[RMDB]
RNA sequence: GGGAACGACUCGAGUAGAGUCGAAAAGCUAUACCGUUCGCGGUAUAGCAAAAUCAUUCCGAGAUGUACUAAUACGAGCCUAUUAGUCAACGGUUCGAGUCCAAACGGGUUACUUCGGUAACCCGAACAGUACCGUCCAGUUCGCUGGACGGUACUGAAAAGAAACAACAACAACAAC
Reactivity to 2A3 in 0.01 (KOAc 150mM, MgCl2 10mM, bicine 150mM(pH8.5), 24C), signal-to-noise 1, nucleotides 027 to 126: g000c000u000a000u000a000c030c000g010u030u060c240g030c010g190g020u000a020u000a000g030c000a000a010a000a000u010c000a040u040u000c000c030g000a050g010a110u080g100u180a020c000u010a010a050u030a060c110g200a030g010c060c030u070a050u020u000a050g030u020c020a040a070c030g020g030u000u080c070g020a000g030u000c000c000a050a020a070c010g000g000g000u000u010a010c000u070u040c170g080g040u000a010a000c050c000c000g000a000a000
Reactivity to DMS in 0.01 (KOAc 150mM, MgCl2 10mM, bicine 150mM(pH8.5), 24C), signal-to-noise 1, nucleotides 027 to 126: g020c000u000a000u000a010c000c000g030u000u010c250g020c020g030g020u000a000u000a000g020c010a020a000a030a060u020c030a140u010u000c020c010g000a190g010a090u000g000u010a000c020u000a010a010u000a010c000g000a150g020c210c180u000a020u000u000a010g010u000c040a040a100c040g000g010u020u000c020g000a020g010u000c020c020a040a090a090c020g020g000g020u000u000a000c000u000u010c120g040g030u000a000a000c000c000c010g020a010a000
About this RNA: Structure probing data (2A3 and DMS) for a 177-nucleotide construct. 2A3 adducts were read by reverse transcription with SuperScript II with manganese. Source: RMDB library M2PK50, as collected in RNAgym. The RNA was probed in 150 mM KOAc, 10 mM MgCl2 and 150 mM bicine (pH 8.5) at 24 C. For DMS the reverse transcriptase was MarathonRT. The 2A3 profile rests on 1,191 reads.